The data come from the RNA Mapping Database (RMDB), library OK3TST. Chemical mapping of a 207-nucleotide RNA with 2A3 and DMS.

[RMDB]
RNA sequence: GGGAACGACUCGAGUAGAGUCGAAAACCUUAACUCAGGAAAAAGUGGUCAGAUUGUACAGCAAAUCUUCAGUUCACUUAACUGUAAAAUGGAGAUAACUUCUUUCAUAAGAUGGUUAUUCAAAUUGCACAAGCUAACCACUUAGCUUAGUGUUUAAUAUGCACCAGUGAUUCGUCACUGGUGCAUAAAAAGAAACAACAACAACAAC
Reactivity to 2A3 in 0.01 (KOAc 150mM, MgCl2 10mM, bicine 150mM(pH8.5), 24C), signal-to-noise 2, nucleotides 027 to 156: c000c000u050u090a080a010c020u020c030a050g040g080a060a060a090a000a000g010u010g000g020u030c010a000g020a030u020u030g040u070a150c030a070g030c030a060a040a090u020c020u000u050c040a030g050u030u040c030a060c100u160u070a090a020c030u040g090u120a010a020a030a180u150g080g020a070g000a080u000a000a000c000u010u000c000u000u090u130c150a220u230a220a020g010a070u080g060g030u010u030a020u020u020c030a010a110a150u070u060g000c010a000c000a020a000g010c000u000a000a000c000c000a030c030u010u020a010g000c000u030u010a050g000u030g000u030u040u010a050a030
Reactivity to DMS in 0.01 (KOAc 150mM, MgCl2 10mM, bicine 150mM(pH8.5), 24C), signal-to-noise 1, nucleotides 027 to 156: c000c020u000u000a110a070c120u010c050a090g040g010a120a090a130a100a050g000u010g010g010u000c050a130g000a010u000u000g000u000a020c000a090g020c030a040a090a120u010c010u000u000c010a070g000u000u000c040a070c020u010u000a070a200c110u020g060u000a000a040a010a070u000g020g000a040g010a030u000a000a070c000u010u000c010u000u010u000c170a120u010a100a060g010a040u020g030g020u010u000a080u000u000c130a080a090a130u000u000g000c000a020c060a040a000g020c010u000a030a050c000c020a030c040u000u000a070g000c010u010u000a120g050u010g000u010u000u000a070a230